[RMDB]
RNA sequence: GGGAACGACUCGAGUAGAGUCGAAAACAGGCCUGUAUGUGAUACAGUAGAAAUUUCCCCAGAUGCCCUGUGGAAAGACAAGCUGCUACCCGGAGUCCUUCCUGGAUGUCUGGCUUAGUGUAGUAUACCAUCAAGGACAACCUGGCUCUGUCUCCUACAGUGGACCAUAGUUCGCUAUGGUCCACUGAAAAGAAACAACAACAACAAC
Reactivity to 2A3 in 0.01 (KOAc 150mM, MgCl2 10mM, bicine 150mM(pH8.5), 24C), signal-to-noise 1, nucleotides 027 to 156: c000a000g010g010c000c000u000g050u130a070u090g190u060g120a080u040a030c020a040g110u130a030g130a040a100a050u000u010u030c010c020c020c000a000g060a130u060g080c080c000c000u000g000u030g030g050a050a020a020g020a050c030a030a000g000c030u020g030c020u060a070c010c020c040g050g000a030g030u030c010c040u080u120c020c090u010g000g000a050u060g080u060c070u050g040g060c050u100u110a060g020u060g020u140a040g010u020a020u080a170c010c030a030u070c030a030a020g050g020a010c010a030a080c040c010u050g050g000c000u080c020u140g050u050c060u060c070c000u050a040